[RMDB]
RNA sequence: GGGAACGACUCGAGUAGAGUCGAAAACUCAUGCACACAUGCGUGAUCGCGUGAAGACCCAUCCAACCAACGGGAAGCUAUGCGUCUUCCUGCUUUGGUCACCAUGCCUGAAUCCGAUCGAGUUGGAAUUGAAGUGCUUGUUCGCAAGCACUUCAAUAAAAGAAACAACAACAACAAC
Reactivity to 2A3 in 0.01 (KOAc 150mM, MgCl2 10mM, bicine 150mM(pH8.5), 24C), signal-to-noise 3, nucleotides 027 to 126: c010u010c000a030u040g000c030a010c000a010c020a070u220g110c100g140u010g030a180u100c080g000c010g020u020g000a070a000g070a090c000c040c020a030u040c040c020a020a050c010c000a030a040c020g010g000g000a010a010g030c050u140a090u300g120c090g060u050c000u020u000c000c010u000g030c060u100u080u060g020g000u000c000a010c030c020a060u120g030c000c010u060g040a100a070u050c040c040g030a080u060c030g000a030g160u000u030g080g000a050
Reactivity to DMS in 0.01 (KOAc 150mM, MgCl2 10mM, bicine 150mM(pH8.5), 24C), signal-to-noise 3, nucleotides 027 to 126: c090u000c000a020u000g020c000a080c090a060c050a090u010g020c190g020u020g000a030u010c110g020c020g020u000g000a040a060g000a200c010c020c020a200u010c050c080a080a060c030c020a070a090c070g010g010g000a030a030g000c050u000a070u010g010c290g010u000c010u000u000c010c010u000g000c150u020u010u000g000g000u000c080a060c090c020a070u000g010c040c030u000g030a070a090u000c050c030g010a070u000c040g010a090g040u010u010g010g000a070
This 177-nucleotide RNA was probed chemically with 2A3 and DMS. For 2A3 the reverse transcriptase was SuperScript II with manganese. As a SHAPE reagent, 2A3 marks flexible, mostly unpaired nucleotides at the ribose 2'-OH. It was measured as part of the RMDB library OK2TRN. For 2A3, 2,939 sequencing reads were counted. For DMS the reverse transcriptase was MarathonRT.